[RMDB]
RNA sequence: GGGAACGACUCGAGUAGAGUCGAAAAAUACAGCGUAAUCGAGCGGAGGAAAACGGCUCUCCGAAAAUCCGGUACGAUUAUGAUCCCACUGCGUCGACGCUAGAUGCAGAACCGGAUUGCCGAGGAACCUUAAAUCCAAGUUCGCUUGGAUUUAAGGAAAAGAAACAACAACAACAAC
Reactivity to 2A3 in 0.01 (KOAc 150mM, MgCl2 10mM, bicine 150mM(pH8.5), 24C), signal-to-noise 2, nucleotides 027 to 126: a000u150a030c050a020g070c000g050u050a060a030u080c020g010a040g100c030g030g040a040g020g050a020a190a070a020c020g020g000c030u000c020u020c040c000g020a070a020a010a010u000c000c000g020g030u070a080c070g040a050u080u070a060u210g070a030u030c000c000c000a030c010u000g000c000g000u000c010g040a080c090g030c260u100a040g000a030u010g000c000a000g030a030a010c000c000g000g010a060u000u080g000c000c000g030a060g040g040a010a010
Reactivity to DMS in 0.01 (KOAc 150mM, MgCl2 10mM, bicine 150mM(pH8.5), 24C), signal-to-noise 6, nucleotides 027 to 126: a080u010a100c170a070g000c020g020u000a060a040u000c010g010a170g010c040g010g000a050g000g000a040a050a100a130c090g010g010c080u000c070u010c010c010g010a040a060a050a040u000c010c000g000g000u010a160c130g000a040u000u000a040u000g000a080u000c010c010c010a300c030u000g000c000g020u000c000g010a130c220g020c170u000a080g010a020u000g000c010a010g000a130a050c020c010g010g000a030u000u000g010c100c010g000a100g000g010a100a140
Overview: Source: RMDB library M2PK90, as collected in RNAgym. Chemical mapping of a 177-nucleotide RNA with 2A3 and DMS. The DMS profile rests on 7,014 reads. The RNA was probed in 150 mM KOAc, 10 mM MgCl2 and 150 mM bicine (pH 8.5) at 24 C. Values are in units of 0.01, from 0 to 300, in steps of 10.